[RMDB]
Source: RMDB library POS240, as collected in RNAgym.
Chemical mapping of a 307-nucleotide RNA with 2A3 and DMS.
DMS adducts were read by reverse transcription with MarathonRT.
The RNA was probed in 150 mM KOAc, 10 mM MgCl2 and 150 mM bicine (pH 8.5) at 24 C.
2A3 adducts were read by reverse transcription with SuperScript II with manganese.
RNA sequence: GGGAACGACUCGAGUAGAGUCGAAAAUAUAACAGGAAAGGCUUGCAGGGCGGUCGGCAUUCCUCCGGAAGGAGGUGAUGCAGUGGAAGUGUACCAAUCAUUGACGCUGAUGAUUUCAUUUGCGACUUUGGUCGUGUUGAUGCUUUCGUUCCAUAAUAGGAAAUAGACCGCCACUGUCCAAGGUUUGCGGUCUAUUUCCGUAAUCCCUUAAAGCCGUCCGCUCUUCAAGCGGCUGUUACAGAGGAGUCAUGUUAGCGCAUGGCUCAAGCUCAUCCUUCGGGAUGAGCAAAAGAAACAACAACAACAAC
Reactivity to 2A3 in 0.01 (KOAc 150mM, MgCl2 10mM, bicine 150mM(pH8.5), 24C), signal-to-noise 2, nucleotides 027 to 266: u220a020u050a010a010c010a020g000g120a260a120a010g180g000c000u040u000g000c040a010g000g010g020c000g020g000u000c000g000g020c000a060u130u110c000c000u000c000c030g090g030a100a130g030g020a020g010g010u040g040a040u090g030c040a010g010u060g050g010a000a010g010u020g000u040a040c020c030a000a000u010c010a000u010u000g020a030c040g010c070u050g020a010u000g060a070u040u250u280c020a040u040u040u060g000c000g020a030c010u050u040u040g040g000u020c050g050u040g040u240u150g060a020u020g000c000u010u030u010c020g040u030u030c040c010a040u100a150a110u070a170g000g000a000a010a000u010a010g000a000c010c000g000c020c000a000c000u010g060u080c050c010a020a030g030g000u040u080u240g000c000g000g000u020c000u020a020u000u010u000c000c000g000u000a000a020u000c030c000c000u020u120a160a030a010g000c000c000g000u000c000c000g000c000u030c000u010u010c010a020a000g000c000g020g020c000u000g000u000u030a060c030a030g140a020g110g080a010g040u010c000a000u010g020u020u100a090g060c040g000c110a000u010g000g000c000u000c000a000a000
Reactivity to DMS in 0.01 (KOAc 150mM, MgCl2 10mM, bicine 150mM(pH8.5), 24C), signal-to-noise 4, nucleotides 027 to 266: u030a230u020a030a040c010a030g010g000a140a180a120g000g010c010u000u000g020c100a020g000g000g010c040g010g000u000c040g000g000c000a150u010u010c020c000u000c000c010g000g090a140a170g010g010a010g010g010u010g020a040u000g000c300a020g010u000g000g000a030a020g010u000g010u000a030c030c030a090a010u000c000a020u000u000g000a070c000g020c010u000g010a010u010g000a230u010u030u020c010a010u010u000u000g010c000g000a040c000u000u000u000g000g010u000c010g010u010g000u010u010g000a040u000g000c010u000u000u000c030g000u000u000c180c020a030u000a060a110u020a090g000g000a010a010a010u000a000g010a020c010c030g030c000c300a000c000u000g000u030c200c240a100a200g000g000u000u020u010g020c000g010g000u000c030u010a010u000u000u000c010c000g000u000a030a090u000c070c040c030u000u010a050a060a130g010c000c000g010u000c000c010g010c000u000c010u000u000c020a020a040g010c010g010g010c000u010g010u000u000a040c270a120g010a120g000g000a010g000u000c000a000u000g010u000u010a170g010c300g000c020a010u000g000g000c000u000c000a000a090